[RMDB]
RNA sequence: GGGAACGACUCGAGUAGAGUCGAAAAAUGUUGGUGAUAGUGCGGAAGUUGCAGUUAAAAUGUUUAAAAAAAACUUUUAACGUACCAAUGGAAAAACUCAAAACACGAGUUGCAACUGCAGAAGCUGAAAUCUGGAAGUUCGCUUCCAGAAAAAGAAACAACAACAACAAC
Reactivity to 2A3 in 0.01 (KOAc 150mM, MgCl2 10mM, bicine 150mM(pH8.5), 24C), signal-to-noise 3, nucleotides 027 to 129: a000u080g000u060u000g000g080u080g030a030u050a240g140u080g070c000g020g060a070a030g000u030u000g000c010a000g000u010u020a000a040a000a000u230g020u090u020u130a090a040a020a040a000a000a000a000c050u030u010u000u000a000a020c040g000u060a090c000c020a020a070u180g000g010a070a130a000a000a000c020u020c030a110a090a050a000c120a030c080g000a010g000u000u040g000c010a000a000c000u000g010c100a010g030a070a020g010c040u070g030a020a040a020
Reactivity to DMS in 0.01 (KOAc 150mM, MgCl2 10mM, bicine 150mM(pH8.5), 24C), signal-to-noise 2, nucleotides 027 to 129: a080u000g010u010u040g010g030u030g020a060u030a050g020u000g040c080g000g000a100a050g040u030u000g050c090a140g020u000u000a060a010a000a000u000g030u000u010u000a000a000a010a080a120a020a050a060c020u000u020u000u000a000a000c010g030u000a060c080c060a060a090u080g020g010a060a000a060a030a050c000u020c000a000a050a080a150c260a080c220g020a020g010u000u000g000c080a010a010c000u010g000c120a110g000a040a090g000c040u020g000a000a010a000